[RMDB]
RNA sequence: GGGAACGACUCGAGUAGAGUCGAAAACGGCAGACUUCAUCCCCGGCUUGCCCAAGUACAUCACGCCAUCAGGGAAGGAGGCGCAGCUAGGCAAGCAGACAGCGUACAAGCUGCUCGCAGGUACAGAGAACAACGCCGAGGCUUACGCCGUGGUGUCGAGAGCCGUCACAUUCGUGUGACGGCUCUCAAAAGAAACAACAACAACAAC
Reactivity to 2A3 in 0.01 (KOAc 150mM, MgCl2 10mM, bicine 150mM(pH8.5), 24C), signal-to-noise 3, nucleotides 027 to 156: c010g010g000c020a030g020a160c020u060u020c130a150u080c030c000c000c010g020g000c010u010u030g000c020c010c000a090a000g040u060a040c080a220u060c030a060c010g020c020c000a140u060c080a070g000g050g080a010a030g060g020a030g010g000c000g030c050a030g020c010u020a020g010g000c010a020a000g000c010a010g030a010c010a010g040c000g080u110a060c040a100a020g000c030u040g030c060u020c010g060c010a010g040g040u080a040c030a050g060a020g020a240a020c050a030a020c030g010c050c020g020a060g000g020c010u110u120a050c130g000c000c010g070u080g000g010u030g070u080c070